RNA sequence: GGGAACGACUCGAGUAGAGUCGAAAACGCAAUACAGUGAGUGGACGGAAGAAAUCCCCUUCCCACCUCCCCACUGUCCACUCACUGUCUUCCUAAGAGGAAAUAUAAAUCGGGGGUGGGAAGGGGAACCUCGAUCCCAUUUCGAUGGGAUCGAGGUAAAAGAAACAACAACAACAAC
Reactivity to 2A3 in 0.01 (KOAc 150mM, MgCl2 10mM, bicine 150mM(pH8.5), 24C), signal-to-noise 2, nucleotides 027 to 126: c080g020c040a070a060u200a140c010a000g000u000g000a010g010u000g000g000a000c020g020g070a060a040g070a050a250a100u080c000c010c000c000u000u000c000c000c000a000c020c000u010c050c050c030c030a090c040u050g000u030c020c000a000c000u010c000a000c000u000g000u000c000u000u000c000c000u030a120a000g080a030g230g260a070a130a000u300a060u070a060a090a050u290c070g000g000g010g010g000u000g000g000g000a000a000g000g000g000g000a010
Source information: The record gives the reactivity of an RNA of 177 nucleotides to 2A3. The reactions ran in a buffer of 150 mM KOAc, 10 mM MgCl2 and 150 mM bicine (pH 8.5), at 24 C. The 2A3 profile rests on 1,421 reads. Values cover nucleotides 27 to 126.